[RMDB]
RNA sequence: GGGAACGACUCGAGUAGAGUCGAAAAGAUGAAAAUUAGUUGCCUACAGUGCUACCCCUUUCGGAGUAAUUGAAAGAUCGCUUUGACGAGCCUAAUGUGGAAGAGCCGUUUGGAGUGCCUGUAGUGUACUGAACACAUAGUUCGCUAUGUGUUCAGUAAAAGAAACAACAACAACAAC
Reactivity to DMS in 0.01 (KOAc 150mM, MgCl2 10mM, bicine 150mM(pH8.5), 24C), signal-to-noise 2, nucleotides 027 to 126: g000a090u010g000a060a100a090a120u020u020a090g000u000u010g010c070c000u010a000c030a000g000u040g040c000u020a030c000c010c000c000u000u000u000c000g050g020a060g010u030a070a190u010u000g020a040a020a030g000a150u000c020g000c000u020u020u000g010a050c020g010a010g020c000c000u000a030a060u010g010u040g010g010a040a010g020a110g010c020c020g000u000u010u000g010g000a030g020u000g000c000c000u000g020u020a010g000u020g020u000
Reactivity to 2A3 in 0.01 (KOAc 150mM, MgCl2 10mM, bicine 150mM(pH8.5), 24C), signal-to-noise 8, nucleotides 027 to 126: g100a030u220g090a020a070a010a120u140u110a070g030u060u030g030c010c000u010a010c010a000g040u080g280c020u130a030c020c000c000c000u000u020u000c020g030g020a050g070u230a170a220u090u110g090a020a020a020g070a180u000c000g010c060u180u220u300g030a060c020g000a000g000c010c010u150a230a170u210g110u240g100g020a030a050g130a030g300c000c000g010u000u000u020g010g000a020g000u010g000c000c000u000g000u010a010g000u010g000u010
The data come from the RNA Mapping Database (RMDB), libraries RFM100 and RFMREP. Structure probing data (DMS and 2A3) for a 177-nucleotide construct. 2A3 is a SHAPE reagent: it acylates the 2'-hydroxyl of flexible nucleotides of all four kinds. The RNA was probed in 150 mM KOAc, 10 mM MgCl2 and 150 mM bicine (pH 8.5) at 24 C. Reactivities are given for positions 27 through 126.